[RMDB]
Chemical mapping of a 177-nucleotide RNA with DMS and 2A3.
DMS adducts were read by reverse transcription with MarathonRT.
RNA sequence: GGGAACGACUCGAGUAGAGUCGAAAAUCUCUAUCCAUUCAAGGCCAUCGAAGGCGGCGAUUUAUCGCUGGAAAAGAAUGCCGAAUACGAAGUGAUAGAUGACUCACAAGAGCACUGGUGGAAGGUCCUAGAUGAACUUGUUCGCAAGUUCAUCUAGAAAAGAAACAACAACAACAAC
Reactivity to DMS in 0.01 (KOAc 150mM, MgCl2 10mM, bicine 150mM(pH8.5), 24C), signal-to-noise 6, nucleotides 027 to 126: u010c070u000c000u000a070u010c040c050a090u000u000c040a120a190g010g010c030c120a150u000c050g010a180a170g000g010c020g010g020c030g010a020u000u000u000a050u000c010g030c010u010g010g010a050a050a070a210g000a070a090u010g000c020c020g000a090a110u000a110c200g000a070a040g020u000g000a030u000a040g010a080u010g010a050c040u000c040a070c110a060a140g000a040g010c060a050c050u000g000g010u000g010g010a070a050g000g010u010c090
Reactivity to 2A3 in 0.01 (KOAc 150mM, MgCl2 10mM, bicine 150mM(pH8.5), 24C), signal-to-noise 4, nucleotides 027 to 126: u000c000u000c000u010a100u020c010c030a060u060u070c040a120a110g010g010c020c020a050u020c030g030a050a020g170g050c000g000g000c000g000a000u040u110u040a080u020c000g000c010u030g110g060a050a050a030a030g070a030a020u090g010c010c020g030a070a020u210a130c120g050a060a030g040u040g080a010u020a020g080a050u120g040a040c000u010c040a040c030a070a060g020a010g060c040a020c110u100g040g000u050g050g050a050a020g050g010u040c010
Overview
Reactivities are given for positions 27 through 126. Conditions: 150 mM KOAc, 10 mM MgCl2 and 150 mM bicine (pH 8.5), 24 C. It was measured as part of the RMDB library OK2TRN. The DMS profile rests on 6,901 reads.